[RMDB]
RNA sequence: GGGAACGACUCGAGUAGAGUCGAAAACAGCAAUUUAGGACAUUGUAAAUGCAACUAGAUUUCUGAAGGGUUGGAUAUCAUACUCCCAAAAAUCAAAACAAUGGUCUAAUCGGGUUUACCUGAUCAACCAUAACACACAGUUCGCUGUGUGUUAUGGAAAAGAAACAACAACAACAAC
Reactivity to 2A3 in 0.01 (KOAc 150mM, MgCl2 10mM, bicine 150mM(pH8.5), 24C), signal-to-noise 3, nucleotides 027 to 126: c040a000g080c060a080a100u030u020u090a050g010g010a030c010a030u030u060g090u190a080a150a070u140g050c020a030a020c020u050a060g000a070u020u030u050c040u070g030a060a070g030g000g040u090u090g060g050a040u050a030u220c040a000u080a140c020u030c010c000c000a030a080a020a020a010u050c030a010a010a010a020c020a020a040u070g030g000u000c010u060a030a030u020c000g030g030g040u020u060u050a110c000c010u040g040a070u060c020a010a080
Reactivity to DMS in 0.01 (KOAc 150mM, MgCl2 10mM, bicine 150mM(pH8.5), 24C), signal-to-noise 4, nucleotides 027 to 126: c040a060g020c110a060a070u010u000u000a010g000g010a090c010a010u000u000g010u000a080a110a080u010g010c170a050a070c090u000a100g010a000u000u000u000c030u010g020a150a150g000g000g010u000u000g020g010a150u010a070u000c100a040u000a080c060u000c010c050c020a020a020a030a050a040u010c060a080a100a080a040c120a040a030u000g010g010u000c060u000a040a020u000c060g010g010g000u000u000u000a120c020c010u000g010a040u000c180a050a140
Overview:
Conditions: 150 mM KOAc, 10 mM MgCl2 and 150 mM bicine (pH 8.5), 24 C. Chemical mapping of a 177-nucleotide RNA with 2A3 and DMS. For DMS the reverse transcriptase was MarathonRT. It was measured as part of the RMDB library OK2TRN. The 2A3 profile rests on 3,640 reads.